[RMDB]
RNA sequence: GGGAACGACUCGAGUAGAGUCGAAAAUUUAAGUGGUGAGAUGGCGUUUGGGUGCCAAAAUGGAUUGCCUGCAAAAUAGCACGAAUUGCUAAAACCGAUCAGGGGUAAGCUGGUAUAGUUACCCCAUCGAAACGAAACGGAGUUACAGCAAUGAAAAUCUAUUUCUAAGGUUCGCCUUAGAAAUAGAAAAAGAAACAACAACAACAAC
Reactivity to 2A3 in 0.01 (KOAc 150mM, MgCl2 10mM, bicine 150mM(pH8.5), 24C), signal-to-noise 2, nucleotides 027 to 156: u100u090u060a070a010g020u010g030g010u050g050a050g010a080u010g030g020c020g020u030u100u110g020g040g010u030g000c020c010a020a040a010a100u110g020g010a030u020u050g030c020c020u040g010c030a030a040a130a160u060a040g030c010a010c070g110a090a060u050u040g010c020u040a000a070a070a070c040c030g010a030u090c100a090g000g000g000g000u020a050a010g110c020u070g130g050u230a140u050a150g020u000u010a000c000c000c000c020a030u030c010g020a030a030a030c000g010a070a020a020c040g000g030a020g020u010u050a060c050a040g040c040a030a020u030g060a040a040a000a060
Reactivity to DMS in 0.01 (KOAc 150mM, MgCl2 10mM, bicine 150mM(pH8.5), 24C), signal-to-noise 1, nucleotides 027 to 156: u000u000u010a010a120g030u000g040g020u000g020a110g010a060u010g000g020c030g040u000u000u000g030g010g030u000g000c000c030a020a040a080a110u000g000g000a010u010u010g020c040c010u000g020c060a070a090a070a170u010a040g050c020a020c070g020a140a080u000u000g050c010u000a020a080a130a100c080c000g030a080u000c050a160g030g010g050g020u000a020a040g060c050u010g040g080u010a100u000a090g020u010u010a090c030c000c000c010a040u010c010g000a050a060a110c010g000a090a060a170c060g000g000a140g020u010u000a070c080a050g050c040a020a020u010g020a080a070a100a130

An RNA of 207 nucleotides, treated with 2A3 and DMS and read out base by base.
For DMS the reverse transcriptase was MarathonRT.
For 2A3 the reverse transcriptase was SuperScript II with manganese.
Values cover nucleotides 27 to 156.